Chemical mapping of a 207-nucleotide RNA with 2A3. The reactions ran in a buffer of 150 mM KOAc, 10 mM MgCl2 and 150 mM bicine (pH 8.5), at 24 C. 2A3 adducts were read by reverse transcription with SuperScript II with manganese.
[RMDB]
RNA sequence: GGGAACGACUCGAGUAGAGUCGAAAACCCCUAUGUUCGCAUAGGGGAAAAAGCGUACUACGAAGCCUUGGACCGCUGAACUACGACCGUUCCCAAAUAGGAACGAGUCGCAGCGCUAGGCUUCGUAUCGCAAAAAAACAUUCUUUCGAGAAUGUAAACGAUGGUAAUGGUUCGCCAUUACCAUCGUAAAAGAAACAACAACAACAAC
Reactivity to 2A3 in 0.01 (KOAc 150mM, MgCl2 10mM, bicine 150mM(pH8.5), 24C), signal-to-noise 1, nucleotides 027 to 156: c000c010c000c000u000a000u000g000u000u050c300g030c150a040u030a020g050g000g060g000a000a000a120a000a000g000c000g010u040a030c070u000a000c090g000a000a000g000c090c030u130u110g000g250a210c040c040g000c000u000g040a220a150c070u120a000c300g000a000c000c000g000u020u030c040c000c110a060a170a060u260a110g000g000a000a010c000g090a110g040u020c000g000c030a000g100c040g000c030u000a010g000g000c000u000u000c000g000u000a000u000c010g000c000a000a000a000a000a000a150a000c000a000u000u000c000u090u040u050c120g010a030g020a030a000u020g000u140a000a300